[RMDB]
RNA sequence: GGGAACGACUCGAGUAGAGUCGAAAAUAACGCGGUGACCAGUCGUUGAUUGUCCGUGGCACUUUUGAUGGCCACACGAUAGUGGUCGCGGGUCAGUCCGGGGUAAUUGGCGCAAUGGCGAAUCAGAGAUGUCUAAUGAGUUCGCUCAUUAGACAUCAAAAGAAACAACAACAACAAC
Reactivity to 2A3 in 0.01 (KOAc 150mM, MgCl2 10mM, bicine 150mM(pH8.5), 24C), signal-to-noise 4, nucleotides 027 to 126: u140a030a030c060g020c040g140g030u060g040a110c020c000a010g090u140c020g030u030u060g060a100u010u090g030u030c050c080g040u100g030g000c040a020c060u080u110u110u210g290a300u140g040g000c010c000a010c000a010c030g140a090u110a120g070u040g050g000u040c000g000c010g020g010g000u070c060a040g030u030c030c000g000g020g000g000u060a080a030u040u050g000g000c010g000c050a060a100u060g050g000c020g040a030a050u060c010a010g030a030
Reactivity to DMS in 0.01 (KOAc 150mM, MgCl2 10mM, bicine 150mM(pH8.5), 24C), signal-to-noise 6, nucleotides 027 to 126: u010a090a130c080g020c050g010g020u010g000a080c040c030a110g010u010c030g010u000u010g000a060u000u010g000u000c060c060g020u000g020g020c040a070c050u000u000u010u010g020a150u000g000g010c020c020a020c020a080c140g010a080u000a090g020u000g020g010u000c020g030c040g010g000g010u010c100a090g000u000c020c040g010g000g010g010u010a040a070u000u000g010g000c030g020c090a070a060u010g010g010c040g010a070a100u000c060a080g000a270